RNA sequence: GGGAACGACUCGAGUAGAGUCGAAAACGGCUAAAACCCGAUACGCGCAAACGCUACCGUAUGAGCGGAAAACGCGGCGUGUAGUACAGGAGUUUGGCGCUUAACAUGAUCUGUCAGGGAACCCCGGGCUGGGAGGACGUUUCGACGUUCUCUCGGUAAAAGAAACAACAACAACAAC
Reactivity to 2A3 in 0.01 (KOAc 150mM, MgCl2 10mM, bicine 150mM(pH8.5), 24C), signal-to-noise 2, nucleotides 027 to 126: c010g030g010c000u070a010a030a060a060c000c000c000g030a030u010a040c010g010c000g000c010a060a090a080c070g000c030u010a040c000c000g010u050a120u250g180a130g040c010g030g000a120a140a030a020c030g000c000g020g000c000g010u050g010u010a020g010u050a040c030a080g020g030a120g110u010u030u050g100g000c040g000c040u060u040a020a000c020a060u100g050a260u000c010u190g120u000c090a060g000g000g030a030a050c000c000c000c010g020g130
The record gives the reactivity of an RNA of 177 nucleotides to 2A3. The data come from the RNA Mapping Database (RMDB), library OK1LIB.